Conditions: 150 mM KOAc, 10 mM MgCl2 and 150 mM bicine (pH 8.5), 24 C. The record gives the reactivity of an RNA of 207 nucleotides to DMS and 2A3. It was measured as part of the RMDB library OK3TST. The DMS profile rests on 8,655 reads. As a SHAPE reagent, 2A3 marks flexible, mostly unpaired nucleotides at the ribose 2'-OH.
RNA sequence: GGGAACGACUCGAGUAGAGUCGAAAAUGAGGGAAAUGGGGAAAGAAACCUCUCCUACCAGAGCAGGGAUUCCUGGUGGCAAGAACGUCCUAAAGCUUUGCAAAGCUCUGGUGUUUGACGUUGAGGAAGUGGAUUCAUGGAAACUGCUGGAACCCUACAUCCUACUAGGAUUCGUCCUAGUAGGAUGAAAAGAAACAACAACAACAAC
Reactivity to DMS in 0.01 (KOAc 150mM, MgCl2 10mM, bicine 150mM(pH8.5), 24C), signal-to-noise 4, nucleotides 027 to 156: u010g010a090g020g010g010a030a090a070u000g010g010g020g020a090a070a130g010a090a100a120c020c020u000c010u000c030c020u000a130c070c030a090g010a060g030c030a160g010g000g010a160u000u000c030c020u010g020g010u000g000g010c030a060a100g010a060a070c060g000u020c030c040u000a090a050a110g020c050u000u010u010g020c100a090a100a100g020c010u000c020u000g000g010u010g010u000u000u010g010a060c020g040u000u000g010a080g000g000a040a070g030u000g000g020a140u000u000c070a100u010g010g000a070a080a060c070u000g000c000u010g000g000a090a110c020c000c010u010a200
Reactivity to 2A3 in 0.01 (KOAc 150mM, MgCl2 10mM, bicine 150mM(pH8.5), 24C), signal-to-noise 5, nucleotides 027 to 156: u090g000a040g000g030g020a050a090a090u140g030g010g010g040a030a130a080g050a060a120a030c010c010u010c020u030c020c000u010a050c000c020a010g000a000g050c040a050g040g020g050a100u050u090c010c010u040g040g000u030g030g000c020a030a020g030a060a030c050g050u060c010c020u080a100a060a030g000c030u090u190u260g060c090a120a050a030g010c000u020c010u010g010g010u000g020u020u040u070g010a010c010g000u030u030g010a010g030g020a070a060g030u070g050g030a080u070u090c020a050u120g030g000a070a060a040c040u040g030c010u020g020g050a060a070c010c000c000u010a030